[RMDB]
RNA sequence: GGGAACGACUCGAGUAGAGUCGAAAACUGGUCUUCAACGAGGAGGGCAAGGAUGCCCAGAAGUUUGUACGCUCGCUGCACAAGACCAUCAUUGCGAAUCCCAUGGACACGCUGAAGGUGUGCGUCAGCCGUCAUGACCAUUCGUGGUCAUGACGGCAAAAGAAACAACAACAACAAC
Reactivity to 2A3 in 0.01 (KOAc 150mM, MgCl2 10mM, bicine 150mM(pH8.5), 24C), signal-to-noise 1, nucleotides 027 to 126: c030u030g040g000u060c020u020u000c020a020a010c000g010a020g050g050a050g000g020g020c000a000a210g300g020a240u150g000c050c000c000a000g080a040a020g030u110u280u250g140u110a020c010g000c020u000c000g000c030u000g000c010a040c000a180a000g000a000c050c000a030u050c010a010u000u190g020c070g020a010a070u030c000c030c000a000u120g030g000a030c030a000c020g020c000u020g090a170a000g090g000u040g000u030g010c030g090u050c060a010
Reactivity to DMS in 0.01 (KOAc 150mM, MgCl2 10mM, bicine 150mM(pH8.5), 24C), signal-to-noise 2, nucleotides 027 to 126: c150u020g030g040u000c000u000u000c020a050a080c000g010a000g020g010a220g010g020g040c030a030a190g020g050a150u000g040c000c010c000a060g000a130a070g000u000u000u000g000u000a060c110g000c000u000c010g010c050u030g020c300a080c170a020a010g000a030c030c010a040u000c030a140u010u000g010c170g020a100a080u000c010c010c010a150u000g000g000a050c030a020c030g010c000u000g000a080a090g010g010u000g010u010g030c080g000u010c150a070

This 177-nucleotide RNA was probed chemically with 2A3 and DMS. Conditions: 150 mM KOAc, 10 mM MgCl2 and 150 mM bicine (pH 8.5), 24 C. For DMS the reverse transcriptase was MarathonRT. Values cover nucleotides 27 to 126.